[RMDB]
RNA sequence: GGGAACGACUCGAGUAGAGUCGAAAAUCAGCUCGAUCUUGUCGAGGAACCGCGGGCCGUACUGCUCGCGGAUGGUGUCGCCGAGCAAUUCGCCCAGUUGGUGGACGUCCUCGCGCAGGCGCGCAUAGACCGUGGAUUAGUUCGCUAAUCCACGGUCAAAAGAAACAACAACAACAAC
Reactivity to DMS in 0.01 (KOAc 150mM, MgCl2 10mM, bicine 150mM(pH8.5), 24C), signal-to-noise 2, nucleotides 027 to 126: u010c110a130g020c030u010c020g020a060u000c060u000u010g020u000c040g010a050g000g000a090a110c000c000g020c020g000g010g050c000c200g040u020a070c240u000g010c030u000c000g020c020g000g020a020u000g000g010u040g020u000c030g000c090c000g000a030g010c070a030a090u000u000c110g010c020c000c020a150g010u010u000g000g010u000g030g010a010c120g010u000c010c010u000c040g000c110g010c070a080g000g020c110g010c130g010c010a170u020a120
Reactivity to 2A3 in 0.01 (KOAc 150mM, MgCl2 10mM, bicine 150mM(pH8.5), 24C), signal-to-noise 1, nucleotides 027 to 126: u080c010a030g070c000u000c000g030a160u030c080u170u120g030u020c030g020a000g050g040a060a050c000c000g000c000g020g000g020c010c100g220u180a160c080u130g000c000u020c000g020c000g000g000a000u030g090g110u150g020u040c040g010c040c020g010a040g120c020a030a130u170u110c080g060c010c010c000a010g130u170u200g090g010u030g070g000a010c040g010u040c000c000u010c020g010c000g000c050a000g010g000c030g000c020g040c000a000u090a060

This 177-nucleotide RNA was probed chemically with DMS and 2A3. The 2A3 profile rests on 1,208 reads. In probing experiments dimethyl sulfate is read out at A N1 and C N3, which are open when not base-paired. For DMS the reverse transcriptase was MarathonRT. For DMS, 1,343 sequencing reads were counted. High 2A3 reactivity points to a flexible backbone, as in loops and unpaired stretches.